[RMDB]
RNA sequence: GGGAACGACUCGAGUAGAGUCGAAAAUUGCAACGCACUCCGCUGCCUGUCAAGUACUGGCGGUGGAGAGUAGGCUGAUUUGUAAUUUCAAAUAUUGGGAAAGAUAAAUCCUUUGUAGACGACUUAAGGAUAUUAAUUCCUUCGGGAAUUAAUAUCCAAAAGAAACAACAACAACAAC
Reactivity to 2A3 in 0.01 (KOAc 150mM, MgCl2 10mM, bicine 150mM(pH8.5), 24C), signal-to-noise 4, nucleotides 027 to 126: u010u010g000c000a000a010c030g000c010a010c000u000c000c000g010c020u000g010c000c010u030g030u020c090a240a140g020u060a140c010u020g000g000c000g000g000u020g000g000a010g000a000g020u040a040g060g000c050u060g030a180u050u030u030g010u000a010a010u010u040u080c110a070a120a070u180a110u160u120g050g010g040a030a100a010g090a100u120a130a150a060u030c000c010u020u040u090g070u050a090g030a130c100g000a010c070u040u020a060a010
Reactivity to DMS in 0.01 (KOAc 150mM, MgCl2 10mM, bicine 150mM(pH8.5), 24C), signal-to-noise 4, nucleotides 027 to 126: u000u000g000c030a010a050c090g010c020a130c000u010c000c010g030c010u000g000c000c000u000g000u000c030a140a180g000u070a030c020u000g000g010c000g000g030u000g000g010a020g000a040g010u010a110g010g010c030u000g020a130u010u010u010g020u010a030a020u000u010u010c070a090a100a140u020a060u010u030g000g000g000a070a050a080g020a080u050a050a090a080u020c010c010u000u010u010g000u010a050g000a140c220g000a100c050u020u000a040a240
Chemical mapping of a 177-nucleotide RNA with 2A3 and DMS. Conditions: 150 mM KOAc, 10 mM MgCl2 and 150 mM bicine (pH 8.5), 24 C. Reactivities are rounded to 0.1 and cut off at 0 and 3.